Source: RMDB libraries RFM100 and RFMREP, as collected in RNAgym. This 177-nucleotide RNA was probed chemically with DMS and 2A3. The reactions ran in a buffer of 150 mM KOAc, 10 mM MgCl2 and 150 mM bicine (pH 8.5), at 24 C. 2A3 adducts were read by reverse transcription with SuperScript II with manganese. High DMS reactivity at an A or C suggests that its Watson-Crick edge is free.

RNA sequence: GGGAACGACUCGAGUAGAGUCGAAAAGAAAGAAGACUGACUUGCUAGUGUUCUCACUCGCUUAUUUCAUUCCGACACAAGAAAUGUGUUGGAAUGAAACGAGUGAGUCAGCAUCACCGUCUUUGAACCACGGGCAUGAUUUCGAUCAUGCCCGUGGAAAAGAAACAACAACAACAAC
Reactivity to DMS in 0.01 (KOAc 150mM, MgCl2 10mM, bicine 150mM(pH8.5), 24C), signal-to-noise 1, nucleotides 027 to 126: g000a130a110a300g010a050a000g000a000c000u020g020a090c190u000u040g040c130u000a030g000u050g000u000u000c000u000c000a020c000u000c000g000c100u020u040a010u000u000u050c010a000u000u000c000c030g000a010c030a030c000a020a220g080a100a220a210u000g000u020g010u000u000g000g000a000a000u000g000a000a000a130c040g000a000g000u000g010a000g000u000c090a060g000c020a030u000c020a160c230c090g000u000c000u000u000u000g000a090a160
Reactivity to 2A3 in 0.01 (KOAc 150mM, MgCl2 10mM, bicine 150mM(pH8.5), 24C), signal-to-noise 5, nucleotides 027 to 126: g120a000a070a000g100a020a000g010a010c040u050g020a030c030u090u070g000c030u070a080g100u090g100u300u050c010u010c010a000c000u010c010g060c050u170u120a090u080u050u020c000a000u000u010c000c000g010a000c000a000c010a030a130g180a300a220a130u090g000u000g000u000u000g000g000a000a010u000g000a000a000a000c000g000a010g020u000g000a020g010u010c010a010g000c010a010u040c030a030c030c050g020u010c000u020u010u010g030a020a030